Conditions: 150 mM KOAc, 10 mM MgCl2 and 150 mM bicine (pH 8.5), 24 C. This 207-nucleotide RNA was probed chemically with 2A3 and DMS. For DMS, 1,973 sequencing reads were counted. Source: RMDB library OK3TST, as collected in RNAgym. For 2A3 the reverse transcriptase was SuperScript II with manganese.

RNA sequence: GGGAACGACUCGAGUAGAGUCGAAAAAAGUGCUAUGAUCAAUUUGUAGUUGAGGCUGUAAUAAUCCAGAUAUGUAUACACAUACAUGUGUGCAUACAUAUGUAUGUAUGACAGGGAAGAGGGUAAUGAAAGGGAUUGAACACAAGCUGGAAAGGAACGUUUUACCACGAUUCGUCGUGGUAAAACGAAAAGAAACAACAACAACAAC
Reactivity to 2A3 in 0.01 (KOAc 150mM, MgCl2 10mM, bicine 150mM(pH8.5), 24C), signal-to-noise 3, nucleotides 027 to 156: a000a000g080u080g010c050u040a040u150g020a060u130c040a090a090u050u080u190g090u120a090g000u020u050g050a040g050g000c010u030g060u050a080a110u060a050a040u070c030c000a000g040a080u030a020u060g060u030a040u050a080c070a010c000a020u050a040c020a020u050g010u010g010u040g130c040a060u100a300c000a000u020a010u000g010u010a000u010g020u020a050u110g020a020c050a040g000g040g010a020a040g040a030g020g020g010u030a020a080u060g060a020a010a020g040g020g010a010u010u090g090a130a000c030a010c000a050a030g000c050u060g030g000a070a070a020g010g030a050a000
Reactivity to DMS in 0.01 (KOAc 150mM, MgCl2 10mM, bicine 150mM(pH8.5), 24C), signal-to-noise 1, nucleotides 027 to 156: a100a070g050u000g000c060u010a040u010g010a060u000c030a040a090u010u010u010g010u000a060g000u000u010g030a070g020g040c060u000g000u000a060a150u000a140a120u030c070c030a190g010a050u000a040u000g030u010a090u000a080c040a020c010a010u000a020c160a050u020g010u020g020u000g020c120a050u020a040c010a000u000a040u000g010u000a080u000g020u000a090u000g000a070c070a050g030g000g010a000a070g030a090g010g040g020u000a010a070u000g000a060a070a000g000g000g000a100u000u010g040a050a190c120a080c050a000a170g040c000u000g040g000a100a020a100g010g010a040a080